Source: RMDB library OK2TRN, as collected in RNAgym. This 177-nucleotide RNA was probed chemically with 2A3 and DMS. For DMS, 1,899 sequencing reads were counted. The RNA was probed in 150 mM KOAc, 10 mM MgCl2 and 150 mM bicine (pH 8.5) at 24 C.
RNA sequence: GGGAACGACUCGAGUAGAGUCGAAAAGUAAAGCGCAAAAUAGUAAGCUGUUAUUAAUAGCUACGAUAUUUGUAAGUUCUGUCGGAGGAGCCACCACUUUCGGCAUUAUGGAAAAGGCUUUUUUGGACCCAUAUUAGGGGUUCGCCCCUAAUAUGGGAAAAGAAACAACAACAACAAC
Reactivity to 2A3 in 0.01 (KOAc 150mM, MgCl2 10mM, bicine 150mM(pH8.5), 24C), signal-to-noise 2, nucleotides 027 to 126: g090u070a030a070a010g070c030g000c010a010a020a000a030u050a040g030u060a190a060g010c010u000g060u050u070a210u210u300a080a060u020a050g020c000u010a020c000g040a030u030a110u220u050u010g030u020a060a140g000u000u050c040u050g030u030c010g040g010a020g000g000a010g120c150c020a020c030c000a000c000u000u050u050c000g000g000c020a010u060u050a050u130g020g000a020a040a060a140g140g030c060u000u050u040u020u120u010g100g030a010
Reactivity to DMS in 0.01 (KOAc 150mM, MgCl2 10mM, bicine 150mM(pH8.5), 24C), signal-to-noise 2, nucleotides 027 to 126: g020u010a090a060a090g010c050g000c010a010a010a010a000u000a200g000u010a050a120g010c000u000g030u000u020a180u010u010a050a020u000a020g030c000u010a020c030g000a090u000a090u000u000u000g020u020a130a220g010u000u000c040u010g050u010c030g010g010a020g010g020a080g000c040c030a060c080c030a130c030u000u000u000c000g010g000c010a050u010u010a030u000g020g000a040a090a090a150g020g010c030u000u000u020u000u000u000g000g000a300
The 2A3 profile rests on 1,148 reads.